[RMDB]
RNA sequence: GGGAACGACUCGAGUAGAGUCGAAAACCCGUCGUGUUCGCACGACGGGAACUACCGAGAAUGGAGCUCGGUAUAAAACUCCAACCGUUGGAAACAAGGGAACAAUCGCCACUUUCGAGUGGCGAAAGUCUUAUUGGUACUUCGGUACCAAUAAGACAAAAGAAACAACAACAACAAC
Reactivity to DMS in 0.01 (KOAc 150mM, MgCl2 10mM, bicine 150mM(pH8.5), 24C), signal-to-noise 2, nucleotides 027 to 126: c000c010c000g010u000c000g020u010g020u000u010c260g000c010a030c010g000a010c000g020g000g010a000a040c060u000a210c010c010g000a000g010a130a110u000g000g000a050g010c000u000c010g010g000u010a050u000a000a010a080a090c010u000c000c020a060a300c050c040g000u000u000g000g000a110a150a210c000a050a010g010g010g010a110a080c290a060a170u000c000g010c000c000a020c000u000u000u000c130g010a000g030u000g010g010c010g020a000a010a080
Reactivity to 2A3 in 0.01 (KOAc 150mM, MgCl2 10mM, bicine 150mM(pH8.5), 24C), signal-to-noise 1, nucleotides 027 to 126: c000c000c000g000u020c000g000u040g010u040u070c230g010c100a000c000g030a000c000g000g000g000a030a020c040u080a020c020c000g000a000g040a070a260u070g020g000a000g010c000u010c000g020g010u000a010u000a010a000a000a010c000u020c010c010a050a080c050c070g230u080u030g050g020a030a090a040c050a050a060g000g010g010a050a060c030a070a020u030c010g000c000c000a020c000u060u140u140c240g060a010g020u000g010g000c000g000a000a000a000